[RMDB]
RNA sequence: GGGAACGACUCGAGUAGAGUCGAAAAGAACACGUCUCGGGACGACGCUAAACCCGCCCUGGUCGGGAUGGGUUUAACGACCCCUCGGGUUUCCUAGUUCCUAAAACUAGGUGGUGGAGUCAUAUAAAAAACUUCUACACGUUCGCGUGUAGAAGAACAAAUUCUAAUUGUUCGCAAUUAGAAUUUGAAAAGAAACAACAACAACAAC
Reactivity to DMS in 0.01 (KOAc 150mM, MgCl2 10mM, bicine 150mM(pH8.5), 24C), signal-to-noise 2, nucleotides 027 to 156: g010a100a060c040a080c040g010u000c040u000c010g030g070g050a080c030g040a300c030g020c030u010a040a030a100c050c000c010g020c020c010c000u020g010g030u000c250g030g050g020a020u020g010g010g030u000u000u000a010a060c040g000a140c040c020c030c020u010c030g020g040g010u000u000u000c030c010u000a030g010u000u000c040c050u010a050a050a040a060c040u000a020g000g020u000g000g010u010g020g010a200g030u000c030a120u000a080u050a010a070a110a160a090a120c000u000u000c000u000a030c000a000c000g020u000u000c290g030c010g020u000g020u000a000g000a010a000g010a040a160
Reactivity to 2A3 in 0.01 (KOAc 150mM, MgCl2 10mM, bicine 150mM(pH8.5), 24C), signal-to-noise 2, nucleotides 027 to 156: g060a120a020c060a010c120g040u010c040u090c130g060g060g000a050c090g030a040c020g010c030u020a010a000a020c020c000c000g020c020c000c010u210g100g100u250c080g020g030g020a080u040g010g000g000u010u010u010a020a010c000g040a020c010c000c000c010u080c070g060g000g000u010u000u010c000c010u010a010g010u010u060c040c040u100a040a060a010a020c010u020a020g010g000u020g000g030u060g030g090a120g000u090c080a040u110a010u300a210a070a010a010a020a060c000u000u020c000u000a010c000a000c000g010u020u030c210g000c000g110u010g000u010a010g000a000a000g000a000a010

Conditions: 150 mM KOAc, 10 mM MgCl2 and 150 mM bicine (pH 8.5), 24 C. Structure probing data (DMS and 2A3) for a 207-nucleotide construct. It was measured as part of the RMDB library M2RFPK. Values cover nucleotides 27 to 156.